[RMDB]
RNA sequence: GGGAACGACUCGAGUAGAGUCGAAAACUGGCGGAACCGGUCGGCCAGCGCGGUGAGCGCGUCCUCGUCGUCGAAUCCGCGCAGCAGCGGCAGCUCGCACAGCUCGUGGGGGAUGACCCGGAUCUCGUUUAUUACCAGACUUCGGUCUGGUAAUAAAAAAAGAAACAACAACAACAAC
Reactivity to DMS in 0.01 (KOAc 150mM, MgCl2 10mM, bicine 150mM(pH8.5), 24C), signal-to-noise 6, nucleotides 027 to 126: c040u010g000g010c040g020g000a080a100c080c020g010g020u020c040g020g000c040c040a090g020c000g010c000g010g030u030g000a220g010c060g000c060g000u020c100c110u030c120g010u010c020g020u020c040g000a170a140u000c030c000g010c020g010c060a110g020c070a060g030c090g020g000c050a120g000c030u010c030g000c040a060c070a120g000c060u020c100g000u000g010g010g010g000g010a080u030g010a100c020c000c040g000g000a080u010c020u010c040g010
Reactivity to 2A3 in 0.01 (KOAc 150mM, MgCl2 10mM, bicine 150mM(pH8.5), 24C), signal-to-noise 6, nucleotides 027 to 126: c010u020g030g020c010g010g000a040a070c040c010g050g090u120c020g030g020c010c010a050g000c000g000c020g030g060u120g070a100g070c030g000c000g050u110c010c040u110c040g110u020c010g020u020c010g010a080a060u020c010c000g010c010g010c030a010g000c020a010g020c020g020g010c010a020g030c020u040c040g030c010a060c020a070g030c020u060c060g020u060g010g030g000g010g000a030u080g080a110c010c010c000g030g030a060u030c050u010c030g030